The record gives the reactivity of an RNA of 177 nucleotides to 2A3 and DMS. Source: RMDB library OK2TST, as collected in RNAgym. For DMS, 3,063 sequencing reads were counted. For 2A3 the reverse transcriptase was SuperScript II with manganese.

RNA sequence: GGGAACGACUCGAGUAGAGUCGAAAAGUGUCGGGAUCGACAUGACGGUCGAUCACAUCGCAUCCGAUGACGUGCGAGGCAAAGGGGUUCGGGUAUCGCAGCCAAAAGGCGUAGGUGACAUUGUCCCGUUUUCAUCAAACUUCGGUUUGAUGAAAACAAAAGAAACAACAACAACAAC
Reactivity to 2A3 in 0.01 (KOAc 150mM, MgCl2 10mM, bicine 150mM(pH8.5), 24C), signal-to-noise 3, nucleotides 027 to 126: g070u040g040u020c040g060g010g020a020u000c020g000a000c040a060u140g180a050c210g090g010u030c010g000a000u030c010a010c020a040u070c000g000c030a030u050c020c040g090a050u090g060a050c120g040u050g020c040g020a040g020g030c020a040a030a080g060g010g000g000u080u080c030g000g000g000u020a040u100c030g030c090a010g030c040c000a060a200a050a040g050g010c050g050u080a070g040g080u090g010a010c000a050u030u040g020u020c000c000c010
Reactivity to DMS in 0.01 (KOAc 150mM, MgCl2 10mM, bicine 150mM(pH8.5), 24C), signal-to-noise 3, nucleotides 027 to 126: g040u000g010u000c010g020g010g000a010u000c010g010a000c020a130u030g010a150c300g000g000u010c000g010a020u000c020a130c100a110u010c050g000c050a040u010c070c050g000a170u020g020a050c130g000u000g020c070g010a060g010g000c080a030a070a100g000g010g000g000u000u000c070g010g000g010u000a080u000c080g010c080a130g020c030c040a030a040a090a100g000g000c020g000u000a080g010g020u020g000a040c070a070u000u010g010u010c000c010c020